[RMDB]
RNA sequence: GGGAACGACUCGAGUAGAGUCGAAAAGGGAUUUUCUAAGUGAACAAAGAUAUGGAUGUUUGGGAAAGCAUCCACUUUGAGAAUUUACCAUAGAUAGCUGGCGUUAAGUUGUAAUGUAGUAUAAAUCACAAUUACUAGGGUUCGCCCUAGUAAUUGUAAAAGAAACAACAACAACAAC
Reactivity to 2A3 in 0.01 (KOAc 150mM, MgCl2 10mM, bicine 150mM(pH8.5), 24C), signal-to-noise 2, nucleotides 027 to 126: g080g000g000a040u010u070u040u030c040u060a110a090g090u080g090a100a020c020a020a090a040g050a120u160a070u200g010g000a000u000g120u090u030u030g150g070g040a070a060a010g020c000a000u040c000c000a010c000u000u000u000g040a030g000a030a020u040u060u080a060c000c000a020u030a070g060a070u060a030g040c080u020g030g020c080g050u020u100a120a090g000u000u110g020u090a080a080u010g010u070a100g080u040a100u040a200a090a020u150c050
Reactivity to DMS in 0.01 (KOAc 150mM, MgCl2 10mM, bicine 150mM(pH8.5), 24C), signal-to-noise 2, nucleotides 027 to 126: g000g030g010a090u000u010u000u010c030u000a110a100g010u000g010a090a300c030a010a020a040g020a230u010a100u010g010g010a010u000g000u000u000u020g000g020g000a200a010a060g000c000a020u000c000c000a020c010u000u000u000g010a060g020a140a080u010u010u000a070c030c020a080u000a070g010a080u000a060g030c040u000g010g020c060g000u000u000a090a090g020u000u000g000u010a040a050u000g010u000a040g000u010a090u000a060a060a090u000c170